[RMDB]
Record summary:
Chemical mapping of a 177-nucleotide RNA with 2A3 and DMS. For 2A3 the reverse transcriptase was SuperScript II with manganese. Conditions: 150 mM KOAc, 10 mM MgCl2 and 150 mM bicine (pH 8.5), 24 C. DMS adducts were read by reverse transcription with MarathonRT. 2A3 is a SHAPE reagent: it acylates the 2'-hydroxyl of flexible nucleotides of all four kinds.
RNA sequence: GGGAACGACUCGAGUAGAGUCGAAAAUAAUUUUAGAAAUGCUUGUUCAAUGCGUUCGGCAGCUUUACGGCCACCCAUAACAUUUCUACCAAAUGGUCCUAAUUCUAAGUCUGCAAAGCAUCCUGCGAUCAAGUGACAUGUUCGCAUGUCACUUGAUAAAAGAAACAACAACAACAAC
Reactivity to 2A3 in 0.01 (KOAc 150mM, MgCl2 10mM, bicine 150mM(pH8.5), 24C), signal-to-noise 3, nucleotides 027 to 126: u100a000a060u040u120u030u070a040g060a030a110a000u070g010c080u110u080g080u110u170c130a110a030u100g010c030g020u000u040c050g040g000c000a010g010c020u030u060u110a040c030g020g000c020c010a020c020c020c000a040u070a100a040c010a040u080u080u000c050u040a090c000c050a050a110a070u080g030g020u060c020c000u030a050a090u080u020c020u050a050a030g100u050c010u040g040c030a070a000a070g010c000a010u030c030c040u090g030c050g060
Reactivity to DMS in 0.01 (KOAc 150mM, MgCl2 10mM, bicine 150mM(pH8.5), 24C), signal-to-noise 3, nucleotides 027 to 126: u030a090a050u010u010u000u020a100g000a090a040a040u010g000c130u000u000g000u020u010c140a090a100u020g030c060g000u020u030c090g000g030c010a020g010c050u010u020u000a060c130g000g000c040c010a070c040c050c030a050u010a100a100c110a030u060u000u010c020u010a060c250c070a000a070a090u030g000g000u000c000c040u030a110a050u000u050c050u000a080a090g000u020c000u010g000c040a010a110a020g030c030a090u010c010c000u000g020c170g030
The DMS profile rests on 3,411 reads.